An RNA of 207 nucleotides, treated with 2A3 and read out base by base. Reactivities are given for positions 27 through 156. Conditions: 150 mM KOAc, 10 mM MgCl2 and 150 mM bicine (pH 8.5), 24 C. It was measured as part of the RMDB library RNAMAK.

[RMDB]
RNA sequence: GGGAACGACUCGAGUAGAGUCGAAAAACGAGUAUUCGUACUCGUAAAGGGGUCGGUCGACGAUCUCGGAAGAGCGAAGAACUACCUGAAGCCUCCACGGGUAGGGAGCUCGCGAGGGAGACCGACGGAGGCACCCAAACUCGUCCUUCGGGACGAGACGCAGUCAGUUAUUCGUAACUGACUGCGUAAAAGAAACAACAACAACAAC
Reactivity to 2A3 in 0.01 (KOAc 150mM, MgCl2 10mM, bicine 150mM(pH8.5), 24C), signal-to-noise 2, nucleotides 027 to 156: a000c000g010a000g010u020a010u150u160c210g040u060a080c010u000c000g010u040a100a030a050g110g020g040g030u050c000g000g020u010c010g000a300c010g020a010u000c020u030c040g040g110a300a210g000a040g010c000g090a300a040g000a010a010c010u010a020c000c000u010g050a180a020g000c000c000u000c000c000a010c010g000g000g000u010a010g030g000g010a020g010c010u030c020g090c000g000a000g000g000g010a010g000a000c000c010g000a000c020g000g000a000g010g030c000a040c010c020c000a090a090a080c010u000c000g010u010c010c010u060u080c220g100g010g000a000c010g000a000g000